[RMDB]
RNA sequence: GGGAACGACUCGAGUAGAGUCGAAAAGUGCCUCGUCGGCCGGGCAUGCCAACCUGAUCCGAAGUUCAAGGUGGUUUCUCUGGCCUUCCAGAGAGAUGCGCGUCGGAAGAACCGACGAACAAACCUUAAAACAAAACGACGUUCGCGUCGUUUUGAACGUCUCUAAAUCGUUCGCGAUUUAGAGACGAAAAGAAACAACAACAACAAC
Reactivity to 2A3 in 0.01 (KOAc 150mM, MgCl2 10mM, bicine 150mM(pH8.5), 24C), signal-to-noise 2, nucleotides 027 to 156: g040u020g040c030c040u050c020g100u010c020g000g000c040c010g010g000g000c050a000u110g040c000c010a080a130c060c000u040g030a040u010c050c150g280a200a070g040u120u100c040a050a000g000g000u020g020g070u000u120u000c040u000c030u030g010g030c030c050u090u100c030c000a010g010a020g000a010g000a060u090g000c070g010c010g110u050c000g010g040a110a130g020a170a090c000c000g000a000c000g020a090a010c070a050a070a020c000c000u080u180a050a070a050a090c000a010a000a000a000c000g000a000c000g000u010u070c250g020c000g090u000c000g020u000u000u000u000g000a020a000
Annotation
Chemical mapping of a 207-nucleotide RNA with 2A3. Conditions: 150 mM KOAc, 10 mM MgCl2 and 150 mM bicine (pH 8.5), 24 C. It was measured as part of the RMDB library M2RFPK. 2A3 adducts were read by reverse transcription with SuperScript II with manganese.